[RMDB]
RNA sequence: GGGAACGACUCGAGUAGAGUCGAAAAAUAAACGCAUUGAAGUUUUAGCAGCCUUGGUCAAUGCUUUAUCCGUUACCUUUAUUACUGGGUGGAUUGUCCUCGAGGCUAUCCGCAGGCUUUCAUCGCAUACUGUGAUCGAUACGAGAACCACAAUGGAUAUAGUAGUUUUAUUCGUAAAACUACUAUAAAAAGAAACAACAACAACAAC
Reactivity to DMS in 0.01 (KOAc 150mM, MgCl2 10mM, bicine 150mM(pH8.5), 24C), signal-to-noise 3, nucleotides 027 to 156: a060u010a040a030a070c130g050c020a020u000u000g010a040a120g000u000u000u000u000a110g020c080a100g000c040c030u000u000g030g020u000c010a030a030u010g010c020u000u000u000a040u000c040c030g020u000u000a060c030c030u000u000u000a080u050u000a110c060u000g000g020g030u000g010g010a110u000u000g000u000c020c010u000c080g010a080g020g010c020u000a050u010c020c020g000c040a120g020g010c040u000u010u010c030a070u000c040g020c050a100u020a070c070u000g030u000g020a080u000c030g010a090u000a050c010g000a120g020a080a060c030c020a030c050a070a110u000g020g010a280
Reactivity to 2A3 in 0.01 (KOAc 150mM, MgCl2 10mM, bicine 150mM(pH8.5), 24C), signal-to-noise 5, nucleotides 027 to 156: a000u110a030a030a010c070g000c010a000u010u030g020a050a030g050u020u030u140u190a040g020c050a010g010c040c020u050u070g050g000u030c010a020a020u010g020c000u050u050u030a040u020c010c020g070u070u050a130c010c000u140u180u110a190u150u090a150c100u120g020g000g060u040g020g010a030u030u080g030u020c020c030u100c070g050a130g000g000c010u010a020u010c020c030g030c050a030g020g000c000u060u150u100c040a060u070c020g010c060a030u080a200c050u100g020u050g070a060u100c040g020a000u040a110c060g020a030g030a100a040c020c050a030c050a050a100u210g050g030a010

Chemical mapping of a 207-nucleotide RNA with DMS and 2A3. For 2A3, 4,272 sequencing reads were counted. Values cover nucleotides 27 to 156. Conditions: 150 mM KOAc, 10 mM MgCl2 and 150 mM bicine (pH 8.5), 24 C. For 2A3 the reverse transcriptase was SuperScript II with manganese. DMS adducts were read by reverse transcription with MarathonRT. The data come from the RNA Mapping Database (RMDB), library OK3TST. The DMS profile rests on 9,171 reads.